[RMDB]
RNA sequence: GGGAACGACUCGAGUAGAGUCGAAAAACGAGUCGUACGCGACUCGAAUGGUAUUGUCGGCGUAAAAGAACAAGACCUCACCGGACGCGACCGGGCUAAAAAGCGAAACGUCAUCUACGGAUGACGAAAAACGGACCUGGGUUCGCCCAGGUCCGAACUAUACACUUCCGUUCGCGGAAGUGUAUAGAAAAGAAACAACAACAACAAC
Reactivity to DMS in 0.01 (KOAc 150mM, MgCl2 10mM, bicine 150mM(pH8.5), 24C), signal-to-noise 2, nucleotides 027 to 156: a120c040g030a000g010u010c010g000u000a180c300g040c040g030a030c010u020c020g020a030a080u030g030g000u000a010u010u000g000u000c030g000g000c080g020u000a090a080a080a210g000a110a110c030a060a120g000a070c050c010u010c040a100c040c010g000g000a090c060g020c150g000a120c010c030g020g000g020c090u000a010a080a080a090a040g060c030g010a120a060a120c010g020u000c010a000u010c020u020a100c270g060g010a000u000g000a010c050g000a040a040a040a060a170c000g050g000a050c000c000u000g030g020g070u000u010c300g000c000c000c000a000g010g010u000c010c000g000a000a020
Reactivity to 2A3 in 0.01 (KOAc 150mM, MgCl2 10mM, bicine 150mM(pH8.5), 24C), signal-to-noise 2, nucleotides 027 to 156: a000c000g000a000g000u000c010g010u030a050c230g000c010g090a000c000u000c000g000a000a100u070g020g000u050a030u040u040g040u030c040g050g130c060g070u130a070a100a020a070g050a040a000c010a020a030g040a030c010c000u020c010a020c000c000g010g010a020c010g000c000g000a010c010c000g000g000g040c040u070a050a000a000a000a000g000c000g020a060a030a010c020g010u000c000a000u000c010u020a010c140g110g000a000u000g000a000c010g040a070a000a000a000a000c000g000g000a000c010c000u000g050g000g020u020u050c170g090c010c000c000a000g000g000u000c000c000g000a000a000